[RMDB]
Chemical mapping of a 177-nucleotide RNA with DMS and 2A3. The data come from the RNA Mapping Database (RMDB), library OK2TST. For 2A3 the reverse transcriptase was SuperScript II with manganese.
RNA sequence: GGGAACGACUCGAGUAGAGUCGAAAAUUUGAUCCGUCCAGUCCGGUGCGGCUGAGGCUCAACGACACGCACCGUGCCAGGUCGGGGCCGCGCGUUGGGGUCAGUCAAGCCGCUGACCGGCCGUGGCCCCAGCAAUAUUCUUCGGAAUAUUGCUGGGAAAAGAAACAACAACAACAAC
Reactivity to DMS in 0.01 (KOAc 150mM, MgCl2 10mM, bicine 150mM(pH8.5), 24C), signal-to-noise 9, nucleotides 027 to 126: u010u010u010g010a090u010c010c010g010u000c030c020a160g000u010c080c010g010g010u000g010c070g020g010c060u000g000a270g010g010c080u000c140a070a110c090g010a090c060a100c060g000c020a040c020c010g010u000g010c020c050a100g020g010u000c040g010g000g010g020c020c040g010c030g010c140g010u000u000g020g040g010g000u000c010a030g010u000c050a100a190g000c080c080g000c020u000g000a020c000c000g000g000c020c050g010u000g000g010c030
Reactivity to 2A3 in 0.01 (KOAc 150mM, MgCl2 10mM, bicine 150mM(pH8.5), 24C), signal-to-noise 7, nucleotides 027 to 126: u110u070u190g060a030u020c020c010g000u000c020c010a010g030u020c010c010g000g000u020g010c030g050g010c080u050g040a050g080g050c050u050c120a100a090c040g150a060c020a010c100g000c010a000c000c010g000u020g030c020c040a110g000g040u060c010g010g010g020g000c020c020g010c020g010c040g020u010u060g300g040g030g010u020c000a010g050u020c060a120a040g050c060c020g000c030u010g050a020c010c010g000g000c010c010g020u050g020g000c020